Structure probing data (2A3 and DMS) for a 207-nucleotide construct. The DMS profile rests on 2,177 reads. DMS adducts were read by reverse transcription with MarathonRT. For 2A3, 1,647 sequencing reads were counted. The RNA was probed in 150 mM KOAc, 10 mM MgCl2 and 150 mM bicine (pH 8.5) at 24 C.
RNA sequence: GGGAACGACUCGAGUAGAGUCGAAAAGAUAAGCUAGCAGCAAAAAGGAACCGAUUCCCACCAAGUUCGGAAAGCGAUACCGGGCGAGGCGCUGAAGAAAGAAUCUCGCUUCAGACACCCCAAGGACAUGACCUUAAAAUGUUCGCAUUUUAAGGAAUCUAUCAGGUAGUUUCGACUACCUGAUAGAAAAAGAAACAACAACAACAAC
Reactivity to 2A3 in 0.01 (KOAc 150mM, MgCl2 10mM, bicine 150mM(pH8.5), 24C), signal-to-noise 2, nucleotides 027 to 156: g020a040u080a090a000g010c020u050a020g040c050a010g000c030a040a040a060a070a060g100g020a080a060c040c050g110a090u040u020c040c000c010a000c020c030a070a020g010u020u030c000g020g010a150a020a000g090c000g020a020u050a070c000c010g050g000g000c020g020a030g010g010c040g000c070u050g020a020a020g020a060a180a010g040a090a120u060c050u080c140g020c000u040u030c040a020g050a090c010a110c030c050c010c020a020a050g060g000a020c030a110u130g080a070c000c000u000u000a000a020a050a030u010g010u020u070c150g020c060a000u000u000u040u000a000a000g010g000a010a040
Reactivity to DMS in 0.01 (KOAc 150mM, MgCl2 10mM, bicine 150mM(pH8.5), 24C), signal-to-noise 2, nucleotides 027 to 156: g020a120u000a020a150g020c060u000a070g010c050a100g000c020a050a090a150a170a110g000g020a080a120c060c030g010a170u010u000c020c000c070a170c010c020a110a130g050u000u000c000g030g010a090a040a110g040c010g020a140u000a120c020c040g010g020g060c050g010a110g020g000c070g000c020u000g010a020a070g010a060a060a070g040a150a080u010c130u010c000g030c010u000u010c030a060g000a270c100a010c020c000c040c000a030a120g020g020a070c070a160u020g010a080c020c020u020u000a010a000a020a010u000g040u000u000c270g010c000a040u000u000u000u010a020a050g010g000a050a070